An RNA of 177 nucleotides, treated with DMS and 2A3 and read out base by base.
[RMDB]
RNA sequence: GGGAACGACUCGAGUAGAGUCGAAAAUAGGUCGUGUUCGCACGACCUAAGAUAAAAUGCAUAAAAUGCCAGUAACCCGAAACACAAGGGAGUGCACCUGGGCUACGAUGUCGUUCGCGACAUCGAACGUAGUAGAACUAUUCGUAGUUCUACUACGAAAAGAAACAACAACAACAAC
Reactivity to DMS in 0.01 (KOAc 150mM, MgCl2 10mM, bicine 150mM(pH8.5), 24C), signal-to-noise 9, nucleotides 027 to 126: u000a000g000g010u000c000g040u000g010u000u010c220g020c010a010c000g000a010c000c000u000a000a020g010a110u010a050a050a090a090u000g010c020a050u010a050a060a080a180u000g010c020c050a040g000u000a090a100c010c000c010g000a100a090a150c160a070c150a090a100g000g010g000a160g010u000g000c030a100c170c020u000g010g010g010c100u010a090c030g010a010u000g010u000c000g010u000u010c190g020c010g000a010c010a010u000c000g010a050a110
Reactivity to 2A3 in 0.01 (KOAc 150mM, MgCl2 10mM, bicine 150mM(pH8.5), 24C), signal-to-noise 9, nucleotides 027 to 126: u060a000g000g000u000c010g000u010g030u040u070c230g020c070a000c000g000a000c000c000u000a000a000g000a000u110a010a090a020a030u100g000c010a000u110a150a300a100a060u170g060c010c010a010g030u070a220a190c020c010c010g060a160a230a010c100a020c030a100a060g040g010g000a050g030u040g000c010a030c050c010u020g000g040g000c010u050a050c030g000a000u000g000u000c000g010u030u050c230g000c000g080a000c000a000u000c010g010a050a010

The reactions ran in a buffer of 150 mM KOAc, 10 mM MgCl2 and 150 mM bicine (pH 8.5), at 24 C. The DMS profile rests on 28,689 reads.